[RMDB]
RNA sequence: GGGAACGACUCGAGUAGAGUCGAAAAGGUCGCCAACUUUGGCACGGCGCGUCUGGCGGAUCGUCGUCCGCUUCACGCGCCUCUCGACCGGGCCGGCAAAUUCGGGCGCGAAGUUGAAGGCGACCAUCAGGAUGAGACCUGUGGAAAUGCGUCGUGGCUUAGUGAUACUCUUCGGAGUAUCACUAAGAAAAGAAACAACAACAACAAC
Reactivity to DMS in 0.01 (KOAc 150mM, MgCl2 10mM, bicine 150mM(pH8.5), 24C), signal-to-noise 1, nucleotides 027 to 156: g000g030u000c020g000c010c000a120a050c010u000u010u010g060g020c020a210c110g000g030c030g020c030g060u010c030u000g000g030c010g050g030a000u000c060g040u000c180g010u010c000c010g020c010u030u000c050a000c010g030c010g010c020c000u000c020u040c030g000a130c020c040g000g000g050c070c020g050g020c090a140a100a100u010u000c030g020g000g020c020g050c010g010a000a040g030u000u010g020a060a110g010g000c010g060a040c010c010a040u000c020a060g020g020a140u000g010a190g000a080c010c020u000g020u010g000g010a030a100a090u000g000c030g030u000c010g010u010g030g000
Reactivity to 2A3 in 0.01 (KOAc 150mM, MgCl2 10mM, bicine 150mM(pH8.5), 24C), signal-to-noise 3, nucleotides 027 to 156: g020g010u000c000g000c020c000a000a010c040u110u050u100g090g030c120a030c090g000g000c000g020c000g030u020c040u020g000g030c030g010g000a030u060c100g200u090c100g000u020c240c000g020c000u040u020c000a000c000g010c000g000c040c010u000c000u000c010g030a040c010c020g020g020g000c030c010g070g050c040a120a110a010u100u040c020g000g010g000c060g000c000g060a020a010g010u080u100g140a120a070g030g000c010g010a000c000c000a010u050c030a000g010g020a050u100g050a010g060a130c000c010u030g030u090g130g070a040a140a040u100g040c030g030u080c050g060u090g080g000
The record gives the reactivity of an RNA of 207 nucleotides to DMS and 2A3. The data come from the RNA Mapping Database (RMDB), library OK3TST. For 2A3 the reverse transcriptase was SuperScript II with manganese. For 2A3, 1,598 sequencing reads were counted.